[RMDB]
RNA sequence: GGGAACGACUCGAGUAGAGUCGAAAAUUGAUGACUUUGCCUAAAGAAGGGAUUCUACAGCCAAAUGCUUUCUUUUUAACAUACCGAAUGAGUAAAAGUGCAAAAUAAGUACAGAACUAUCAAACAGCAACAAAUGUGCUUCUGCUGCCUACCACAAACCAGGAGUGAGUUUCGACUCACUCCUGGUAAAAGAAACAACAACAACAAC
Reactivity to 2A3 in 0.01 (KOAc 150mM, MgCl2 10mM, bicine 150mM(pH8.5), 24C), signal-to-noise 2, nucleotides 027 to 156: u060u050g010a010u020g030a000c010u060u050u100g060c010c020u120a180a140a000g010a010a060g020g000g070a030u130u000c050u150a040c000a030g070c110c010a040a080a090u080g030c000u090u140u030c000u010u000u120u020u140a080a030c040a020u150a080c000c060g140a150a060u030g040a070g080u050a000a110a030a030g010u010g000c000a140a000a000a000u100a250a000g000u020a010c030a050g010a090a010c030u060a060u080c000a100a010a040c050a080g030c020a010a030c020a080a170a120u080g000u060g010c040u060u030c000u020g000c000u080g000c000c010u090a010c040c000a030c030a050a170